[RMDB]
RNA sequence: GGGAACGACUCGAGUAGAGUCGAAAAACUUGUGUGAGUAUACUUUUAGUACAAGCGAGUACACGCAGUAUACCGCCACUUGUGUGAGAAUACUUUUAGUACAAGCGAGUACAAGCAGUAUACUGCCCCCGUACCAGCAUUUCGAUGCUGGUACGGGAAAAGAAACAACAACAACAAC
Reactivity to DMS in 0.01 (KOAc 150mM, MgCl2 10mM, bicine 150mM(pH8.5), 24C), signal-to-noise 1, nucleotides 027 to 126: a010c260u060u000g000u050g060u010g030a000g030u000a000u000a000c000u000u000u000u000a130g050u000a100c010a000a300g040c060g000a300g000u000a000c000a050c300g040c300a000g000u000a000u000a000c050c090g000c000c000a100c300u030u110g000u030g000u000g020a080g000a110a010u000a050c000u000u000u010u010a000g080u000a000c000a010a300g000c000g000a300g000u000a000c000a000a100g060c130a000g000u000a010u000a000c000u000g000c040c130
Reactivity to 2A3 in 0.01 (KOAc 150mM, MgCl2 10mM, bicine 150mM(pH8.5), 24C), signal-to-noise 3, nucleotides 027 to 126: a000c140u140u070g020u080g040u050g250a070g030u010a000u000a010c000u030u040u010u150a050g010u000a010c040a080a010g020c000g040a000g000u000a000c090a010c120g040c070a000g000u020a000u000a080c020c000g010c000c040a160c090u170u130g080u030g000u050g100a210g030a120a000u000a020c000u070u160u200u250a020g020u000a000c000a010a010g000c010g030a000g000u040a030c000a000a000g050c020a000g000u000a000u010a010c000u000g010c020c000
Source: RMDB library OK1LIB, as collected in RNAgym. The record gives the reactivity of an RNA of 177 nucleotides to DMS and 2A3. 2A3 adducts were read by reverse transcription with SuperScript II with manganese. The RNA was probed in 150 mM KOAc, 10 mM MgCl2 and 150 mM bicine (pH 8.5) at 24 C. The DMS profile rests on 713 reads.